[RMDB]
RNA sequence: GGGAACGACUCGAGUAGAGUCGAAAACUGGCCAACAAUCCCCUUCUAAAGGCAGGUGGUGUCUCCAGCACCAGGGCCAUACGGCUGCAACACCCCUACAAGUGCCGGUAGGUGUGGGCUGAGACCAUGAGAUAAGGAAAUUCGUUUCCUUAUCUCAAAAAGAAACAACAACAACAAC
Reactivity to 2A3 in 0.01 (KOAc 150mM, MgCl2 10mM, bicine 150mM(pH8.5), 24C), signal-to-noise 5, nucleotides 027 to 126: c030u010g060g000c010c030a040a030c030a110a300u120c010c000c010c030u090u070c040u180a130a090a020g040g020c040a020g020g100u060g020g020u030g030u040c050u030c100c010a010g010c000a030c020c020a020g020g040g000c000c000a010u070a070c060g010g000c000u030g040c010a060a030c010a040c010c030c000c000u010a000c020a100a070g040u020g140c020c020g030g000u000a010g000g030u000g020u040g020g020g000c010u020g020a010g020a070c010c010a040
Reactivity to DMS in 0.01 (KOAc 150mM, MgCl2 10mM, bicine 150mM(pH8.5), 24C), signal-to-noise 9, nucleotides 027 to 126: c110u000g010g010c010c020a100a120c140a120a140u010c030c010c000c070u000u000c100u010a070a110a090g000g010c080a060g010g020u000g010g020u000g010u000c040u000c110c110a110g000c020a050c050c030a090g000g010g010c020c020a080u010a060c100g010g010c020u010g010c070a090a230c020a070c020c040c010c020u000a030c050a060a110g020u000g010c030c030g010g010u000a020g000g010u000g010u000g010g010g020c030u000g000a080g000a110c040c090a150
Structure probing data (2A3 and DMS) for a 177-nucleotide construct. The 2A3 profile rests on 10,294 reads. For DMS the reverse transcriptase was MarathonRT. 2A3 is a SHAPE reagent: it acylates the 2'-hydroxyl of flexible nucleotides of all four kinds. In probing experiments dimethyl sulfate is read out at A N1 and C N3, which are open when not base-paired.